[RMDB]
RNA sequence: GGGAACGACUCGAGUAGAGUCGAAAAGCAAUACUUCAUUCUUCCUAGUGCAUGAGUAAUUCAUAUCCACUAUUUGCUCCCUCUUUUACAAAUUGGAGGAUGGCGAUGCAGAUGGAAGAUGACCUGCAGUUGUUAUGAACUUCGGUUCAUAACAACUAAAAGAAACAACAACAACAAC
Reactivity to 2A3 in 0.01 (KOAc 150mM, MgCl2 10mM, bicine 150mM(pH8.5), 24C), signal-to-noise 4, nucleotides 027 to 126: g030c000a030a100u060a270c050u070u090c030a040u160u070c010u000u020c000c000u030a040g150u020g020c050a010u020g030a030g100u300a300a130u170u090c050a020u050a050u180c040c030a030c070u060a080u080u060u060g010c010u010c010c020c010u010c030u050u100u020u030a120c100a050a260a160u110u100g000g000a020g060g000a040u140g050g020c080g010a000u100g000c010a020g010a240u120g010g010a010a000g000a010u020g000a030c000c010u030g000c040
Reactivity to DMS in 0.01 (KOAc 150mM, MgCl2 10mM, bicine 150mM(pH8.5), 24C), signal-to-noise 4, nucleotides 027 to 126: g020c050a080a070u000a300c090u020u000c020a040u000u010c000u000u000c000c020u010a110g030u010g010c220a040u010g010a060g010u020a090a060u000u000c060a040u000a100u000c190c020a060c100u000a080u000u010u010g010c020u010c100c010c010u000c020u000u010u010u020a120c220a030a040a110u030u010g010g030a050g010g000a030u000g030g010c130g000a050u000g010c010a010g020a090u010g020g010a030a040g010a020u000g000a140c120c030u000g000c110
Notes:
An RNA of 177 nucleotides, treated with 2A3 and DMS and read out base by base. For 2A3 the reverse transcriptase was SuperScript II with manganese. The reactions ran in a buffer of 150 mM KOAc, 10 mM MgCl2 and 150 mM bicine (pH 8.5), at 24 C. The DMS profile rests on 2,809 reads. DMS adducts were read by reverse transcription with MarathonRT.